[RMDB]
RNA sequence: GGGAACGACUCGAGUAGAGUCGAAAAUGGGCUACCAGUAAGCGAAAAAUGAUACAGGACGAAAAAAACAUAAUUCGAGAUUUUUCAGGAUGGAUUUUUUUAGGUAUCUAUCAAAACUAUUCUGAUGUCCAAUGCAUCUAUUCGUAGAUGCAUUGGAAAAAGAAACAACAACAACAAC
Reactivity to DMS in 0.01 (KOAc 150mM, MgCl2 10mM, bicine 150mM(pH8.5), 24C), signal-to-noise 2, nucleotides 027 to 126: u020g000g010g020c030u000a060c040c010a040g000u010a050a110g000c060g010a040a010a070a040a060u000g010a120u020a050c080a020g030g020a130c040g010a010a000a040a070a050a030a140c080a060u010a050a100u020u020c010g020a160g010a170u000u010u000u000u000c000a000g000g000a000u000g000g000a040u000u000u020u000u020u000u000a010g000g020u030a040u050c010u000a000u010c040a010a000a000a010c020u000a020u000u000c000u000g000a010u000g000
Reactivity to 2A3 in 0.01 (KOAc 150mM, MgCl2 10mM, bicine 150mM(pH8.5), 24C), signal-to-noise 4, nucleotides 027 to 126: u030g000g010g000c010u010a030c020c010a030g030u050a040a030g020c030g080a070a020a000a010a030u100g030a010u040a080c030a060g060g020a010c050g080a050a000a000a000a030a050a030c090a050u210a110a060u110u050c040g040a020g040a280u100u100u060u070u030c000a010g000g000a010u000g050g000a060u000u010u000u000u000u000u050a030g040g010u220a060u180c010u000a020u000c000a000a030a000a010c010u010a020u020u000c000u010g020a010u060g060
About this RNA
This 177-nucleotide RNA was probed chemically with DMS and 2A3. The 2A3 profile rests on 3,481 reads. Values are in units of 0.01, from 0 to 300, in steps of 10. DMS adducts were read by reverse transcription with MarathonRT. Conditions: 150 mM KOAc, 10 mM MgCl2 and 150 mM bicine (pH 8.5), 24 C. 2A3 is a SHAPE reagent: it acylates the 2'-hydroxyl of flexible nucleotides of all four kinds.